Annotation: The record gives the reactivity of an RNA of 177 nucleotides to 2A3 and DMS. The reactions ran in a buffer of 150 mM KOAc, 10 mM MgCl2 and 150 mM bicine (pH 8.5), at 24 C. The data come from the RNA Mapping Database (RMDB), library RFM100.
RNA sequence: GGGAACGACUCGAGUAGAGUCGAAAAGAUGCAGUCAGGCCUCAAGACAUUGAGCCACCGGAUGGGACUAGACGGUGCUGCCUGCGCGUCCCCCCCUUUGAUCAAGCUAGAUGGUCAGUAGGGGUAACUUUCUGCCUGGUUUCGACCAGGCAGAAAGAAAAGAAACAACAACAACAAC
Reactivity to 2A3 in 0.01 (KOAc 150mM, MgCl2 10mM, bicine 150mM(pH8.5), 24C), signal-to-noise 3, nucleotides 027 to 126: g110a020u260g050c030a000g000u020c000a000g000g000c000c010u000c000a010a010g120a290c150a300u060u110g000a000g000c000c020a000c000c000g010g000a010u030g010g000g010a000c010u010a010g010a040c000g000g000u000g000c010u000g000c000c000u000g000c000g000c030g000u020c000c000c000c000c000c000c000u020u000u000g000a000u010c000a100a040g100c030u130a040g060a300u090g020g000u000c010a030g160u080a010g000g000g000g000u010a010a000
Reactivity to DMS in 0.01 (KOAc 150mM, MgCl2 10mM, bicine 150mM(pH8.5), 24C), signal-to-noise 1, nucleotides 027 to 126: g010a110u100g000c100a030g000u010c010a000g000g060c030c000u050c020a040a000g050a260c300a150u000u000g000a020g000c070c020a000c000c060g010g020a070u030g000g010g000a010c000u000a050g020a090c050g000g000u000g000c020u000g000c010c010u000g000c010g010c200g010u030c000c000c000c000c100c000c000u000u010u000g000a110u000c000a000a220g050c270u060a070g040a020u000g000g040u000c000a000g000u020a010g000g030g000g000u020a000a000
For 2A3 the reverse transcriptase was SuperScript II with manganese.